This 207-nucleotide RNA was probed chemically with DMS and 2A3. For 2A3, 1,674 sequencing reads were counted. For DMS, 1,950 sequencing reads were counted. Source: RMDB library VIROID, as collected in RNAgym.
[RMDB]
RNA sequence: GGGAACGACUCGAGUAGAGUCGAAAAGCAAUGAGGUAAGGUGGGACUUUUCCUUCGGGAACCAAGCGGUUGGUUCCGAGGGGGGUGUGAUCCAGGUACCGCCGUAGAAACUGGAUUACGACGUCUACCCGGGAUUCAAACCCGGUCCCCUCCAGAAGAUCUAUGAUGUGUUCGCACAUCAUAGAUCAAAAGAAACAACAACAACAAC
Reactivity to DMS in 0.01 (KOAc 150mM, MgCl2 10mM, bicine 150mM(pH8.5), 24C), signal-to-noise 1, nucleotides 027 to 156: g020c000a070a180u000g000a140g020g080u000a040a100g000g030u000g020g030g020a050c040u000u000u020u000c010c030u030u000c060g070g050g010a030a020c020c010a000a060g010c200g040g020u000u000g010g010u000u010c030c010g020a090g000g020g000g000g020g060u030g000u010g020a090u000c010c010a040g030g010u010a070c110c030g010c020c190g030u000a050g010a080a050a300c130u010g000g000a240u000u000a030c030g010a040c040g000u000c050u000a070c040c000c000g020g020g000a100u000u000c200a170a160a100c020c010c000g000g020u010c020c000c010c010u010c010c000a180g020a240a230
Reactivity to 2A3 in 0.01 (KOAc 150mM, MgCl2 10mM, bicine 150mM(pH8.5), 24C), signal-to-noise 3, nucleotides 027 to 156: g050c040a040a160u190g010a060g040g100u150a100a020g030g040u100g040g040g020a030c030u090u080u080u070c010c000u000u070c090g100g000g000a020a040c010c010a020a000g100c040g140g060u020u000g010g000u010u000c000c000g000a020g000g010g010g010g030g000u070g010u010g000a000u000c010c000a030g000g000u020a010c010c020g000c000c010g030u050a040g080a040a300a010c090u080g000g010a030u050u020a010c050g010a020c050g020u040c050u020a050c010c000c010g030g000g010a050u170u210c100a160a070a200c020c000c020g000g010u030c020c000c010c000u000c010c020a070g030a180a020